[RMDB]
RNA sequence: GGGAACGACUCGAGUAGAGUCGAAAACGGACGGGAUUUUAGCCCGGUUGCAGGUUUACCCAUUUCGUGCUGGGUCCUGGACCCAAUUAAGAUGAUAGAAAUAUUAUCGAUUUCUUUACCGUCCGGACAUGCGAUACUAUUUCGAUAGUAUCGCAUGAAAAGAAACAACAACAACAAC
Reactivity to DMS in 0.01 (KOAc 150mM, MgCl2 10mM, bicine 150mM(pH8.5), 24C), signal-to-noise 6, nucleotides 027 to 126: c010g000g000a010c010g010g000g000a110u000u010u000u010a100g010c120c080c130g010g000u000u010g020c010a020g000g010u010u010u010a070c000c010c000a060u000u000u010c200g020u010g010c280u000g010g010g010u000c010c020u000g010g000a030c010c010c170a060a080u010u000a080a130g000a010u000g010a020u000a000g000a140a080a130u000a010u010u000a020u000c030g000a120u010u000u000c070u000u000u000a170c000c010g010u000c000c000g010g010a190
Reactivity to 2A3 in 0.01 (KOAc 150mM, MgCl2 10mM, bicine 150mM(pH8.5), 24C), signal-to-noise 3, nucleotides 027 to 126: c010g010g010a000c010g010g040g060a110u030u100u070u300a040g070c040c030c000g000g010u010u060g180c020a010g040g050u130u210u240a040c000c040c000a020u160u220u200c180g060u140g090c050u020g020g020g000u010c000c010u020g000g000a010c000c000c000a020a010u070u040a090a040g000a010u020g000a000u010a030g030a030a050a020u060a040u080u030a010u030c000g000a000u030u090u030c060u070u070u040a060c000c010g010u000c000c000g000g010a000
Conditions: 150 mM KOAc, 10 mM MgCl2 and 150 mM bicine (pH 8.5), 24 C. Structure probing data (DMS and 2A3) for a 177-nucleotide construct. The 2A3 profile rests on 4,061 reads. The DMS profile rests on 9,537 reads.